An RNA of 207 nucleotides, treated with DMS and read out base by base. For DMS, 1,627 sequencing reads were counted. DMS adducts were read by reverse transcription with MarathonRT.

[RMDB]
RNA sequence: GGGAACGACUCGAGUAGAGUCGAAAACAGCAGAGCACAUUGCCAGCUUUUUUAGGCGCGCCAAGGCAGGCAGGCUUGCGCCAAGUUGCUUUUAGGCGCAGCAUUAGAGAGCAAGCAGCGCGCAGUUUUCAAGCAAGGCAGGCCAAGAGGCGCGCAGGAAUAAAGGGGUGUUCGCACCCCUUUAUUCAAAAGAAACAACAACAACAAC
Reactivity to DMS in 0.01 (KOAc 150mM, MgCl2 10mM, bicine 150mM(pH8.5), 24C), signal-to-noise 1, nucleotides 027 to 156: c040a100g020c050a090g010a300g040c030a070c040a110u010u000g000c010c020a230g010c030u000u000u000u000u000u000a160g030g040c000g040c040g020c010c010a050a240g000g030c020a080g020g040c000a070g040g000c000u030u050g010c010g070c040c020a100a280g030u000u000g010c000u020u000u000u000a090g040g030c050g070c060a110g030c000a110u000u000a110g010a130g010a060g010c050a050a100g000c100a140g010c060g010c060g030c030a090g030u000u000u040u000c060a110a160g050c000a100a090g000g000c030a030g030g000c010c010a100a130g060a200g000g010c030g140c000g080c010a090g010